[RMDB]
This 177-nucleotide RNA was probed chemically with 2A3 and DMS. The reactions ran in a buffer of 150 mM KOAc, 10 mM MgCl2 and 150 mM bicine (pH 8.5), at 24 C.
RNA sequence: GGGAACGACUCGAGUAGAGUCGAAAAUUUAGCCUUUUUUAUGAGUUGCUUUAUUAGGGCCCAAGUAAAGAUAAAUGGUCGCCAAGUGUUCUGAAAGCUCUAUUAUGCCUCUAGAAAAACACUACCACCCACUAUAUGAGUUCGCUCAUAUAGUGGGAAAAGAAACAACAACAACAAC
Reactivity to 2A3 in 0.01 (KOAc 150mM, MgCl2 10mM, bicine 150mM(pH8.5), 24C), signal-to-noise 1, nucleotides 027 to 126: u050u060u080a030g020c000c060u000u040u050u000u000u000a200u170g000a010g040u160u080g110c050u200u100u020a080u050u100a020g050g030g020c020c000c030a000a050g030u080a070a100a000g060a070u160a160a180a050u150g060g060u050c000g100c100c000a000a060g060u000g030u190u000c050u010g020a070a040a010g000c010u000c010u030a050u020u010a000u130g010c020c000u000c020u010a030g020a090a030a000a000a000c080a000c060u010a040c010c000a020
Reactivity to DMS in 0.01 (KOAc 150mM, MgCl2 10mM, bicine 150mM(pH8.5), 24C), signal-to-noise 2, nucleotides 027 to 126: u010u000u010a070g000c030c040u000u000u000u000u000u000a090u020g010a060g020u010u010g010c000u010u000u000a010u000u000a120g010g000g020c010c030c020a060a050g010u000a080a070a070g000a120u000a100a070a110u000g020g000u010c080g020c040c050a030a090g000u000g010u010u010c020u000g000a100a110a140g010c030u000c040u000a050u000u000a030u000g010c000c000u000c060u000a140g000a020a040a070a020a040c050a010c090u000a090c120c050a180